Structure probing data (DMS and 2A3) for a 207-nucleotide construct. The RNA was probed in 150 mM KOAc, 10 mM MgCl2 and 150 mM bicine (pH 8.5) at 24 C.

[RMDB]
RNA sequence: GGGAACGACUCGAGUAGAGUCGAAAAGAGAUUCAUUACUCUAAAUCAGUCAAUUACAAUCAUGUCAGAACUGAAAAGAAGCAGCAUUAACGGUUGAUAUCGAUAAGAGAGGGAUGAAUCUCUUCGAAAGCCAUAGCUACCUUCGGGUAGCUAUGGCGACUGGUAUUACGUUCGCGUAAUACCAGUCAAAAGAAACAACAACAACAAC
Reactivity to DMS in 0.01 (KOAc 150mM, MgCl2 10mM, bicine 150mM(pH8.5), 24C), signal-to-noise 2, nucleotides 027 to 156: g000a030g020a030u000u000c000a050u000u000a040c000u000c000u000a060a220a080u010c040a220g010u000c010a020a020u010u000a230c050a100a130u000c170a100u000g000u000c110a170g020a090a110c030u010g000a100a090a160a080g010a130a110g010c010a100g000c040a050u000u000a090a070c040g010g000u000u000g000a140u000a050u000c050g000a030u000a060a190g020a060g000a030g000g000g020a010u000g000a010a000u010c000u010c000u000u000c030g010a100a060a130g040c020c000a010u000a000g020c000u000a010c000c010u000u000c300g060g010g030u000a010g000c000u040a000u010g000g020c000
Reactivity to 2A3 in 0.01 (KOAc 150mM, MgCl2 10mM, bicine 150mM(pH8.5), 24C), signal-to-noise 4, nucleotides 027 to 156: g000a000g000a000u000u000c000a010u010u030a050c000u010c000u020a090a070a060u010c010a010g020u000c000a020a010u060u090a200c060a040a110u100c030a040u070g100u090c020a010g030a130a040c010u060g040a080a070a070a000g040a030a010g010c030a000g000c010a020u040u060a040a030c080g020g010u010u000g010a020u040a080u220c120g000a000u030a130a100g060a000g000a000g070g050g000a000u000g000a000a000u000c000u000c000u010u020c010g030a060a010a000g000c000c000a000u000a000g000c000u000a000c000c000u020u050c150g050g000g010u000a000g010c000u000a000u000g000g000c010